[RMDB]
RNA sequence: GGGAACGACUCGAGUAGAGUCGAAAAUCUACCCGAAUCAUAGUCCAUGUGGGGUUCCAUUCGCAUGAGUUUCAUGGACUCGAUUCAUAGAUCUAUGACACUCAAUGCGAGAUGGGACCUCGGUGGGUAGACAUGCUGCAUUCGUGCAGCAUGUCUAAAAAGAAACAACAACAACAAC
Reactivity to 2A3 in 0.01 (KOAc 150mM, MgCl2 10mM, bicine 150mM(pH8.5), 24C), signal-to-noise 4, nucleotides 027 to 126: u030c030u030a130c000c000c000g040a010a070u150c100a130u150a080g130u060c000c000a050u100g150u230g250g000g000g000u010u000c000c000a000u050u000c000g000c000a000u000g000a000g000u000u000u000c000a000u000g000g000a020c080u000c000g140a160u250u090c020a080u210a200g030a050u000c000u000a000u000g000a000c000a000c040u000c000a050a110u000g010c000g000a020g000a000u000g000g010g000a010c000c000u000c000g010g000u010g000g000g020
Reactivity to DMS in 0.01 (KOAc 150mM, MgCl2 10mM, bicine 150mM(pH8.5), 24C), signal-to-noise 1, nucleotides 027 to 126: u020c130u040a120c000c000c000g080a170a110u080c130a090u080a120g020u000c150c000a030u000g000u100g090g000g010g000u000u010c000c000a000u000u000c000g110c000a000u000g000a000g000u000u000u000c000a000u000g000g020a030c160u000c130g000a280u070u000c080a200u030a030g020a070u010c000u000a030u020g000a060c060a030c000u000c010a020a040u010g000c000g000a050g000a010u000g030g000g000a000c030c000u000c010g030g090u000g000g000g020
Overview
The record gives the reactivity of an RNA of 177 nucleotides to 2A3 and DMS. DMS adducts were read by reverse transcription with MarathonRT. The DMS profile rests on 1,527 reads. The data come from the RNA Mapping Database (RMDB), libraries RFM100 and RFMREP.